[RMDB]
RNA sequence: GGGAACGACUCGAGUAGAGUCGAAAAUGCGUUGUUCGCAACGCAAAAGAUAUGGAAGGAACUACAUGGACAAAUGCGUUGAAACACGCUCGGAAACGAGCGUGUGGAGCAUUUGAGAACCAUGCCUUCCUAAGUCAAAUCGUGCCUUCGGGCACGACGCCUAUUAACGAUUCGUCGUUAAUAGGCGAAAAGAAACAACAACAACAAC
Reactivity to 2A3 in 0.01 (KOAc 150mM, MgCl2 10mM, bicine 150mM(pH8.5), 24C), signal-to-noise 4, nucleotides 027 to 156: u100g000c000g000u000u020g020u040u090c250g020c090a000a000c000g020c000a040a060a040a040g010a010u040a010u060g000g000a000a010g020g010a020a020c060u110a030c300a010u010g010g050a060c000a000a000a000u020g020c030g260u300u030g020a010a000a000c000a000c000g000c000u000c000g000g000a010a030a020c000g000a000g000c020g000u000g000u000g000g000a010g000c010a010u000u000u000g050a090g040a030a010c000c000a010u010g010c010c000u000u000c000c000u000a050a010g020u000c030a030a040a100u040c000g000u000g000c010c000u050u120c230g030g000g000c010a000c000g000a000
Reactivity to DMS in 0.01 (KOAc 150mM, MgCl2 10mM, bicine 150mM(pH8.5), 24C), signal-to-noise 2, nucleotides 027 to 156: u000g010c000g000u010u010g000u000u010c210g070c040a020a060c000g000c000a070a020a160a130g030a150u000a180u020g000g000a130a060g000g000a080a100c050u000a300c000a010u010g070g010a300c000a000a010a030u000g010c000g000u010u010g030a250a130a050c020a010c010g050c010u000c010g000g020a160a080a210c000g000a040g010c010g020u010g000u000g000g000a250g040c000a000u010u000u000g010a030g000a260a070c000c000a010u000g010c010c240u000u000c020c030u000a000a070g000u000c040a010a090a100u000c000g060u000g010c000c000u000u000c300g110g000g050c010a000c000g000a020